[RMDB]
The data come from the RNA Mapping Database (RMDB), library TTRINS. Chemical mapping of a 177-nucleotide RNA with DMS. The reactions ran in a buffer of 150 mM KOAc, 10 mM MgCl2 and 150 mM bicine (pH 8.5), at 24 C. Reactivities are rounded to 0.1 and cut off at 0 and 3. Reactivities are given for positions 27 through 126. For DMS the reverse transcriptase was MarathonRT. For DMS, 1,369 sequencing reads were counted.

RNA sequence: GGGAACGACUCGAGUAGAGUCGAAAAGAUAUGGAGCAUUUUCGAUCACUCCCUCGCUAGGAGAGCUGUCGGAAACGACAGUUACCUCCUUGGACCGAGGGAGGUGAUCGAAAAUGCUCCUAAGUCACUCUAGUCCUAUGUUCGCAUAGGACUAGAGAAAAGAAACAACAACAACAAC
Reactivity to DMS in 0.01 (KOAc 150mM, MgCl2 10mM, bicine 150mM(pH8.5), 24C), signal-to-noise 1, nucleotides 027 to 126: g020a000u010a300u000g000g040a020g000c000a030u020u000u000u000c010g030a010u000c020a080c000u000c000c000c010u000c000g020c010u010a020g040g000a000g030a060g000c000u000g010u000c000g010g000a130a090a260c000g010a000c020a000g020u000u020a170c290c000u020c010c010u010u010g010g020a090c300c020g000a030g000g000g020a010g010g030u010g020a020u000c000g010a000a000a000a040u000g010c000u020c000c000u000a000a050g010u000c010a300